[RMDB]
RNA sequence: GGGAACGACUCGAGUAGAGUCGAAAAUUGAAUGGAUACACCUGAGACUGAUGAAUAGCACCCUGUUUGUCGGGGACCCAUUCUCGCCUCCUGAAAGCAAAGUGCUGAGUGAUCUUGAUGAUGCGCCAUCGCACGAAUAGUUCGCUAUUCGUGCGAUAAAAGAAACAACAACAACAAC
Reactivity to DMS in 0.01 (KOAc 150mM, MgCl2 10mM, bicine 150mM(pH8.5), 24C), signal-to-noise 2, nucleotides 027 to 126: u010u000g000a100a050u010g020g000a100u000a090c130a140c030c010u000g010a130g020a040c080u000g010a080u000g010a050a080u010a060g010c100a100c050c130c020u000g000u000u000u010g020u010c010g010g000g000g000a100c120c020c020a070u000u010c030u000c140g040c020c040u010c010c010u000g000a060a060a060g010c060a010a070a070g030u010g000c020u010g000a160g000u000g020a050u000c040u010u000g000a100u000g000a140u010g000c080g020c080c070
Reactivity to 2A3 in 0.01 (KOAc 150mM, MgCl2 10mM, bicine 150mM(pH8.5), 24C), signal-to-noise 1, nucleotides 027 to 126: u070u040g030a030a010u050g030g020a020u050a100c060a060c090c000u060g050a030g030a090c030u010g010a050u080g030a110a070u120a120g100c040a050c030c040c040u050g050u080u120u060g270u050c010g050g010g000g000a020c000c000c000a010u020u000c020u000c050g020c030c040u020c000c020u020g160a010a100a000g000c040a030a060a000g080u120g000c060u000g010a040g060u050g020a040u060c000u040u160g020a080u030g030a060u070g050c000g020c000c010
An RNA of 177 nucleotides, treated with DMS and 2A3 and read out base by base. Values are in units of 0.01, from 0 to 300, in steps of 10. 2A3 adducts were read by reverse transcription with SuperScript II with manganese. The reactions ran in a buffer of 150 mM KOAc, 10 mM MgCl2 and 150 mM bicine (pH 8.5), at 24 C.